[RMDB]
RNA sequence: GGGAACGACUCGAGUAGAGUCGAAAAAAGAUAUGGAAGCCUGGAGGACGAUGAAAUACAGGAAACCACAUCGGAAACGAUGUGGGAGUACUGUAUGGAGUCCGCGAAACAGGCUUCCUAAGUCAAAGGUACAUCACUAGUUCGCUAGUGAUGUACCAAAAGAAACAACAACAACAAC
Reactivity to DMS in 0.01 (KOAc 150mM, MgCl2 10mM, bicine 150mM(pH8.5), 24C), signal-to-noise 2, nucleotides 027 to 126: a110a210g010a070u000a300u000g010g010a000a000g010c000c000u000g020g040a080g010g040a050c030g020a110u010g020a200a160a020u000a040c010a000g010g020a190a190a250c000c000a010c000a000u000c000g000g000a100a110a230c000g000a020u020g020u000g000g000g000a040g000u010a080c010u020g000u010a000u000g000g040a150g000u000c000c110g000c070g000a130a020a240c000a000g020g010c000u000u000c020c000u000a040a030g020u000c040a060a100a080

Structure probing data (DMS) for a 177-nucleotide construct. It was measured as part of the RMDB library TTRDES. The DMS profile rests on 1,098 reads.